[RMDB]
Chemical mapping of a 207-nucleotide RNA with 2A3 and DMS. Conditions: 150 mM KOAc, 10 mM MgCl2 and 150 mM bicine (pH 8.5), 24 C.

RNA sequence: GGGAACGACUCGAGUAGAGUCGAAAAAAAGAUGUUUUUCAAAAAAUCGAUUAGAUUGUAUCGAAGUUUUGCCGGAUCGUUUGUACAAAUAGACUACAUCGUCGCACACGUGACAUUGAGCAUAUCUGUUGGCAGGUGUCAUUUUGUUUGUACAUAGUAACAACAGACAAUUCGUUGUCUGUUGUUAAAAAGAAACAACAACAACAAC
Reactivity to 2A3 in 0.01 (KOAc 150mM, MgCl2 10mM, bicine 150mM(pH8.5), 24C), signal-to-noise 4, nucleotides 027 to 156: a020a000a020g150a110u120g020u060u080u050u060u130c080a060a050a020a020a020a030u040c020g010a020u030u080a100g100a200u140u230g060u130a030u040c030g020a050a030g010u020u010u080u090g030c030c020g040g030a080u080c080g090u040u060u090g010u010a010c000a010a030a020u040a030g010a000c020u040a010c060a060u050c040g070u020c030g000c030a010c010a010c120g040u030g000a010c000a080u090u160g030a080g070c000a020u060a030u150c060u090g070u080u170g110g000c050a080g030g020u010g010u010c020a020u010u060u080u070g030u010u000u000g010u000a010c010a020u090a050g080
Reactivity to DMS in 0.01 (KOAc 150mM, MgCl2 10mM, bicine 150mM(pH8.5), 24C), signal-to-noise 4, nucleotides 027 to 156: a050a040a140g020a120u020g010u000u010u000u010u010c030a020a030a090a070a080a060u000c020g010a120u010u010a100g010a120u000u000g010u000a090u010c030g010a060a180g020u000u000u000u000g010c010c040g020g000a120u000c060g010u000u000u010g020u000a020c030a020a020a050u000a050g020a060c050u000a060c020a040u000c030g020u000c050g030c030a030c070a050c080g030u010g010a030c020a220u010u000g010a150g000c030a060u010a050u000c040u000g010u000u010g050g010c020a160g020g010u000g020u010c060a060u000u000u000u000g010u000u000u000g010u010a020c030a030u000a110g000